[RMDB]
RNA sequence: GGGAACGACUCGAGUAGAGUCGAAAACUCAGGUACAGUGGCGCGCAGUACCAGCAGGCCGGCCUCUGCGCGACGUACGUGUCUCUGAUCGGCCCGCAGUACGCGCGAUCAGCGCGGAUCGUACGCGAUCCGUGUGUGGGUUCGCCCACACACGGAUAAAAGAAACAACAACAACAAC
Reactivity to 2A3 in 0.01 (KOAc 150mM, MgCl2 10mM, bicine 150mM(pH8.5), 24C), signal-to-noise 1, nucleotides 027 to 126: c020u040c020a030g130g060u150a050c050a070g060u100g080g030c020g040c000g010c040a030g000u040a040c000c010a060g000c010a000g030g020c020c030g000g000c000c030u060c050u040g000c000g020c000g020a040c050g110u130a060c030g040u030g040u040c000u000c030u080g060a100u000c030g080g000c000c010c010g070c060a030g030u110a020c040g000c010g000c050g010a110u040c010a010g030c050g000c030g050g030a060u050c040g020u070a030c070g040c020g110
Reactivity to DMS in 0.01 (KOAc 150mM, MgCl2 10mM, bicine 150mM(pH8.5), 24C), signal-to-noise 2, nucleotides 027 to 126: c050u000c030a100g010g020u020a070c170a140g030u010g020g010c010g000c020g010c020a120g020u000a040c020c070a160g010c050a040g000g010c020c010g020g000c060c030u010c010u000g020c070g040c000g020a100c190g010u030a090c030g020u000g010u010c050u000c040u010g010a070u000c000g000g000c010c000c020g020c080a210g010u010a040c040g020c000g020c010g000a020u010c090a070g000c150g020c050g010g000a020u000c060g010u000a080c080g020c040g020

About this RNA:
The record gives the reactivity of an RNA of 177 nucleotides to 2A3 and DMS. The reactions ran in a buffer of 150 mM KOAc, 10 mM MgCl2 and 150 mM bicine (pH 8.5), at 24 C. For DMS the reverse transcriptase was MarathonRT. It was measured as part of the RMDB library OK2TRN.